[RMDB]
RNA sequence: GGGAACGACUCGAGUAGAGUCGAAAACACAUCUGGCUAAUUGUUUUGUAUUUUUUGUUGAGACGGGGUUUUGCCCUGUUGCCCAAGCUGGUCUUGAACUCCUGGACUCAAGCAAUCCACUCAUGUCAGCCUCCCAAAGUAUUGGGAUUACAAGUGACAAAUGUACGGGAUUCGUCCCGUACAUUUGAAAAGAAACAACAACAACAAC
Reactivity to DMS in 0.01 (KOAc 150mM, MgCl2 10mM, bicine 150mM(pH8.5), 24C), signal-to-noise 1, nucleotides 027 to 156: c060a080c070a100u000c040u000g000g040c020u010a070a080u020u010g000u000u020u000u000g000u000a000u000u000u010u010u020u000g000u010u010g020a100g000a050c010g010g020g070g030u000u020u000u000g010c010c010c040u000g000u000u000g030c010c030c040a060a100g020c000u000g000g020u000c020u000u000g010a070a120c040u000c050c030u010g040g010a070c010u020c030a050a050g030c060a050a050u000c020c030a060c050u000c010a050u000g000u000c020a050g010c040c020u000c000c010c010a020a060a160g030u000a090u010u000g020g010g020a130u000u000a040c080a030a030g040u000g000a220
Reactivity to 2A3 in 0.01 (KOAc 150mM, MgCl2 10mM, bicine 150mM(pH8.5), 24C), signal-to-noise 1, nucleotides 027 to 156: c010a000c000a030u030c020u010g020g000c000u080a140a000u130u000g050u000u090u000u020g120u030a160u000u130u000u020u000u110g080u010u030g000a000g010a000c010g000g020g000g000u010u040u120u200g030c000c010c010u010g000u000u050g030c000c020c010a030a040g020c000u010g000g010u080c020u040u090g060a040a050c030u070c070c070u060g050g010a100c010u020c030a030a030g000c000a030a070u000c000c010a040c030u010c020a060u120g030u010c000a020g060c030c020u020c000c000c010a030a060a000g120u120a160u140u040g030g000g010a000u040u080a080c050a030a120g080u050g160a010
Chemical mapping of a 207-nucleotide RNA with DMS and 2A3. For 2A3, 708 sequencing reads were counted.